Chemical mapping of a 207-nucleotide RNA with 2A3. For 2A3, 405 sequencing reads were counted. Values cover nucleotides 27 to 156. The reactions ran in a buffer of 150 mM KOAc, 10 mM MgCl2 and 150 mM bicine (pH 8.5), at 24 C.
RNA sequence: GGGAACGACUCGAGUAGAGUCGAAAAGUUGAGAGCGUUUAACUUAAGUCUUUUUUAUUAGCUUAAAAAAACUAUAUACAAGUGGUGGUAGUCCGCCACUCUAAAGGGACGCCUUUAGAAGAAGAGGGAAAGGCACUAAGCUUCGGCUUAGUGCCAACAGUACCUACGAGUUCGCUCGUAGGUACUGAAAAGAAACAACAACAACAAC
Reactivity to 2A3 in 0.01 (KOAc 150mM, MgCl2 10mM, bicine 150mM(pH8.5), 24C), signal-to-noise 1, nucleotides 027 to 156: g030u070u030g040a010g010a000g060c010g010u000u050u250a070a000c090u080u100a120a040g050u170c040u070u220u020u100u110u120a190u070u090a040g030c000u060u070a050a020a000a000a000a000a000c070u100a120u060a030u070a300c030a100a200g000u040g000g010u030g010g100u070a010g130u070c020c000g000c000c000a000c000u010c000u010a040a000a000g000g000g000a060c090g220c000c000u070u080u050a040g010a090a000g000a070a030g070a100g080g010g040a020a080a140g040g000c000a000c000u000a000a000g000c010u030u100c300g000g010c030u000u000a000g000u000g000c000c000a000a000